[RMDB]
Chemical mapping of a 177-nucleotide RNA with 2A3 and DMS. For DMS the reverse transcriptase was MarathonRT. The data come from the RNA Mapping Database (RMDB), library OK2TST.
RNA sequence: GGGAACGACUCGAGUAGAGUCGAAAACUAACUAUCUGCGCGAACUGGUGGAGCUACCGCCAGAAACCAGCUCUAAAGUCGCUGUAGAAAAAGACCGUCGUCGCAUGAAGGCGAAUCAGAUUCGUCAGACUUUUAGUGGGUUCGCCCACUAAAAGUCAAAAGAAACAACAACAACAAC
Reactivity to 2A3 in 0.01 (KOAc 150mM, MgCl2 10mM, bicine 150mM(pH8.5), 24C), signal-to-noise 1, nucleotides 027 to 126: c000u070a000a060c010u010a040u210c010u130g010c020g000c000g030a140a130c020u010g030g010u070g040g000a100g080c030u150a130c030c030g060c000c000a030g000a090a000a000c020c040a020g040c000u040c020u170a160a120a030g010u090c000g010c060u010g020u070a130g080a040a070a030a020a000g070a070c060c040g120u070c030g040u040c000g000c140a040u120g130a100a110g010g000c000g070a000a010u060c040a050g110a170u020u020c000g000u000c000a040
Reactivity to DMS in 0.01 (KOAc 150mM, MgCl2 10mM, bicine 150mM(pH8.5), 24C), signal-to-noise 1, nucleotides 027 to 126: c150u000a080a110c150u000a110u000c000u000g030c040g000c030g000a060a130c080u000g010g040u040g000g000a140g010c050u010a180c090c060g000c010c080a030g010a060a080a130c100c030a130g000c010u000c010u010a080a260a060g000u000c010g000c010u000g010u000a100g000a050a120a130a090a040g000a040c140c050g040u000c040g080u000c010g030c100a100u030g010a050a110g000g030c000g000a030a060u000c090a050g030a300u030u000c000g000u000c040a300